[RMDB]
RNA sequence: GGGAACGACUCGAGUAGAGUCGAAAAUACCAAUAACAGAAUGCACCACAGCGUAAAAUCAUCUGAUUGGGUGAGUUGGUCGCACCGCCAUUUGACGAACGAACGCCAAGCCUAAGCCGUCUUUGUGAACACGAGCUAGUCUUCGGACUAGCUCGAAGCCAAAGUUACAGUUCGCUGUAACUUUGGCAAAAGAAACAACAACAACAAC
Reactivity to DMS in 0.01 (KOAc 150mM, MgCl2 10mM, bicine 150mM(pH8.5), 24C), signal-to-noise 2, nucleotides 027 to 156: u000a180c020c000a100a130u000a080a230c050a100g000a080a070u000g030c090a080c010c020a050c060a120g000c020g020u010a070a040a100a100u010c020a050u000c050u000g010a180u010u020g000g000g050u000g030a070g020u000u010g020g050u000c000g050c040a080c040c000g000c030c010a100u000u000u020g020a090c050g000a150a100c060g000a070a050c020g020c020c000a080a160g030c020c010u010a090a100g010c030c040g030u010c020u000u000u000g010u000g010a100a120c060a220c030g000a040g010c000u000a020g000u000c000u000u000c300g010g010a030c000u000a020g030c000u000c000g000a010a070
Reactivity to 2A3 in 0.01 (KOAc 150mM, MgCl2 10mM, bicine 150mM(pH8.5), 24C), signal-to-noise 3, nucleotides 027 to 156: u060a000c000c010a000a070u140a050a000c010a020g170a170a120u050g040c010a000c050c010a040c070a040g070c050g020u070a010a060a050a090u050c030a020u000c020u060g070a270u130u200g020g000g000u040g010a040g040u050u100g060g000u030c040g040c040a030c010c030g020c010c010a070u090u030u090g020a040c050g010a100a000c030g020a040a020c040g010c030c010a000a070g000c010c010u040a060a000g010c010c000g060u040c030u060u070u100g030u070g100a030a010c030a030c080g000a000g010c000u000a000g010u010c000u000u020c120g080g000a000c000u000a020g000c000u000c000g000a000a010
About this RNA
The data come from the RNA Mapping Database (RMDB), library M2RFPK. The record gives the reactivity of an RNA of 207 nucleotides to DMS and 2A3. Reactivities are given for positions 27 through 156. The DMS profile rests on 2,402 reads.